Structure probing data (2A3 and DMS) for a 177-nucleotide construct.
For 2A3 the reverse transcriptase was SuperScript II with manganese.
It was measured as part of the RMDB library OK1LIB.
The DMS profile rests on 1,531 reads.
RNA sequence: GGGAACGACUCGAGUAGAGUCGAAAACAGUCCAAUGCUUCACUCAGCCAUUUUACCUCACCCCCACUGAUGUUCGCCGACCGUUGACUAUUCUCUACAAACCACAAAGACAUUAGAACACUAUACCACCUACGUGCACUUUCGAGUGCACGUAGGUAAAAGAAACAACAACAACAAC
Reactivity to 2A3 in 0.01 (KOAc 150mM, MgCl2 10mM, bicine 150mM(pH8.5), 24C), signal-to-noise 3, nucleotides 027 to 126: c030a010g110u070c020c000a050a040u100g010c010u010u020c040a020c100u050c020a020g000c020c000a090u060u040u030u100a020c000c000u010c020a040c020c010c000c020c000a010c060u070g030a050u070g050u060u010c050g020c080c000g020a030c000c020g020u030u030g020a030c020u020a060u080u020c000u000c010u000a060c030a120a140a070c010c000a040c020a030a070a000g070a020c020a040u000u050a050g070a190a010c030a020c110u050a040u030a120c040c020
Reactivity to DMS in 0.01 (KOAc 150mM, MgCl2 10mM, bicine 150mM(pH8.5), 24C), signal-to-noise 2, nucleotides 027 to 126: c230a110g000u020c000c030a050a050u000g020c020u040u000c070a000c000u000c030a040g130c020c010a030u020u030u000u040a040c000c010u000c100a190c020c000c000c050c040a140c050u040g000a120u020g010u000u030c020g070c050c080g000a060c100c050g000u010u000g000a030c070u020a080u010u010c020u000c000u000a100c160a050a130a070c060c020a000c080a070a020a100g000a020c150a020u000u010a050g020a120a030c040a080c000u000a070u000a180c140c060